[RMDB]
RNA sequence: GGGAACGACUCGAGUAGAGUCGAAAAGGGAGAUUUUUCUCAUGGUGAAAGGCUAAGCAGGAGCAGGCACUUUACGUGGUGGGAACAAAGGGAGGUGUCACUUACUUUAAACAGCCAGAUUACUAUCGAGGACCUCACCAAGCCAUGAGGGAUCCGCCCCAAAUCCCUAUUUCGAUAGGGAUUUGGGAAAAGAAACAACAACAACAAC
Reactivity to 2A3 in 0.01 (KOAc 150mM, MgCl2 10mM, bicine 150mM(pH8.5), 24C), signal-to-noise 1, nucleotides 027 to 156: g000g040g000a070g020a110u000u030u020u140u070c010u000c020a000u030g000g000u070g080a120a060a060g010g000c040u050a030a080g020c060a040g020g070a050g010c040a020g060g000c060a040c090u070u100u090a040c090g020u070g000g030u050g030g010g000a110a000c090a070a060a090g040g050g020a060g000g000u030g030u010c000a010c000u040u090a040c010u090u100u200a070a100a060c050a040g000c030c010a000g020a050u090u030a080c120u070a060u190c040g010a070g020g000a000c000c020u030c060a020c050c030a030a020g010c000c000a010u000g000a000g000g000g000a030u010c000c000g000c000